[RMDB]
RNA sequence: GGGAACGACUCGAGUAGAGUCGAAAAAGCUGAUGCGUCUUCGUUUCAGGACCUCAUGGACGUACCUACCGAUAAUACCGUGAUGACGAAUGCUUUAGCGAAAACUGCACCAUACGUGGCCGAUUGGACCUAUGCUCACAUUCGUGUGAGCAUAGGUAAAAGAAACAACAACAACAAC
Reactivity to 2A3 in 0.01 (KOAc 150mM, MgCl2 10mM, bicine 150mM(pH8.5), 24C), signal-to-noise 3, nucleotides 027 to 126: a000g010c040u050g000a040u040g030c000g040u040c080u130u090c030g060u040u010u060c050a020g040g020a100c000c010u080c040a080u150g040g000a020c020g030u070a080c000c020u080a060c020c000g080a080u100a190a050u070a130c000c050g040u030g080a040u080g050a030c040g050a050a000u040g010c030u060u060u040a040g000c010g070a060a030a030a010c040u040g000c010a030c000c000a020u070a150c070g000u060g060g020c030c020g100a120u000u120g060g030
Reactivity to DMS in 0.01 (KOAc 150mM, MgCl2 10mM, bicine 150mM(pH8.5), 24C), signal-to-noise 4, nucleotides 027 to 126: a090g000c050u000g000a060u010g010c080g000u000c120u000u000c080g020u010u000u000c050a090g020g000a110c090c050u000c040a080u000g030g000a050c120g010u010a060c050c020u000a120c120c030g020a110u010a060a110u010a110c070c040g020u000g000a060u010g010a080c060g000a080a050u000g010c050u000u000u000a070g000c030g010a070a040a050a100c090u010g030c030a030c040c040a070u000a100c080g000u000g000g010c030c030g000a160u010u000g010g000

Source: RMDB library OK2TST, as collected in RNAgym. The record gives the reactivity of an RNA of 177 nucleotides to 2A3 and DMS. The RNA was probed in 150 mM KOAc, 10 mM MgCl2 and 150 mM bicine (pH 8.5) at 24 C.